Annotation: Chemical mapping of a 177-nucleotide RNA with 2A3 and DMS. 2A3 adducts were read by reverse transcription with SuperScript II with manganese. DMS adducts were read by reverse transcription with MarathonRT.
[RMDB]
RNA sequence: GGGAACGACUCGAGUAGAGUCGAAAAGUGUGCAGCCUGUGCACAUCACAAUUCCAGGGGGUGCCAUUCACAUCGACCACACUGUGACUGGUACCCUCUGGAGUUGUGCAGUGCACAACCUGGCCAAUAACAGUUAUCGGUUCGCCGAUAACUGUUAAAAAGAAACAACAACAACAAC
Reactivity to 2A3 in 0.01 (KOAc 150mM, MgCl2 10mM, bicine 150mM(pH8.5), 24C), signal-to-noise 5, nucleotides 027 to 126: g200u170g060u130g100c010a000g000c010c040u020g000u000g000c000a000c000a050u040c000a010c000a000a000u010u000c000c000a000g010g000g010g000g010u000g010c000c000a010u000u010c000a010c010a030u090c090g160a140c080c060a080c030a010c090u020g000u000g010a000c010u000g000g000u000a000c000c000c000u000c000u000g000g000a000g000u000u000g000u000g010c000a010g000u000g000c000a000c000a000a010c000c020u040g040g010c000c010a040a040
Reactivity to DMS in 0.01 (KOAc 150mM, MgCl2 10mM, bicine 150mM(pH8.5), 24C), signal-to-noise 5, nucleotides 027 to 126: g010u000g000u020g020c030a050g010c260c080u010g020u000g000c000a000c000a110u000c010a010c000a010a010u010u000c000c000a020g010g000g010g010g010u000g000c010c000a010u000u000c000a010c000a030u010c120g000a160c190c160a060c120a180c240u000g000u000g000a020c070u000g000g010u000a010c000c000c000u000c010u000g000g000a000g010u000u000g000u000g020c130a080g010u000g020c000a020c000a030a080c200c030u000g010g000c000c050a100a130